[RMDB]
This 177-nucleotide RNA was probed chemically with DMS and 2A3. For 2A3 the reverse transcriptase was SuperScript II with manganese.

RNA sequence: GGGAACGACUCGAGUAGAGUCGAAAAAUGGAAGGAUUCUCGUGCCAUUUAUGGUAAUGUUAGUAGACAAGAUCUUACUAAAUAUACCAUGAUGGAUUUGGUGUUUGCACUGCGCAAUUUUGAUGAAAAACAAUGCUUGGUUCGCCAAGCAUUGUUUAAAAGAAACAACAACAACAAC
Reactivity to DMS in 0.01 (KOAc 150mM, MgCl2 10mM, bicine 150mM(pH8.5), 24C), signal-to-noise 3, nucleotides 027 to 126: a080u010g010g020a100a090g000g000a140u010u000c020u000c020g030u020g030c000c000a030u010u010u020a010u010g000g000u000a050a060u010g010u000u000a010g010u020a000g000a030c020a200a170g020a300u010c010u000u010a010c000u000a000a050a010u010a180u010a000c010c000a000u000g000a010u000g000g000a130u000u010u010g010g010u010g010u000u010u000g010c040a100c080u000g030c110g010c080a040a060u000u000u010u000g010a130u010g000a040a090
Reactivity to 2A3 in 0.01 (KOAc 150mM, MgCl2 10mM, bicine 150mM(pH8.5), 24C), signal-to-noise 1, nucleotides 027 to 126: a000u090g000g040a020a070g040g030a070u080u000c000u040c060g060u100g010c020c000a000u060u140u090a000u060g000g010u010a010a060u120g000u100u020a000g000u000a000g000a070c230a300a040g040a160u040c010u080u000a000c000u070a020a020a000u140a050u010a040c030c000a000u000g000a000u000g040g090a100u170u050u200g060g020u070g050u020u120u010g000c020a010c070u000g000c030g010c170a080a120u000u060u060u300g170a190u150g000a110a050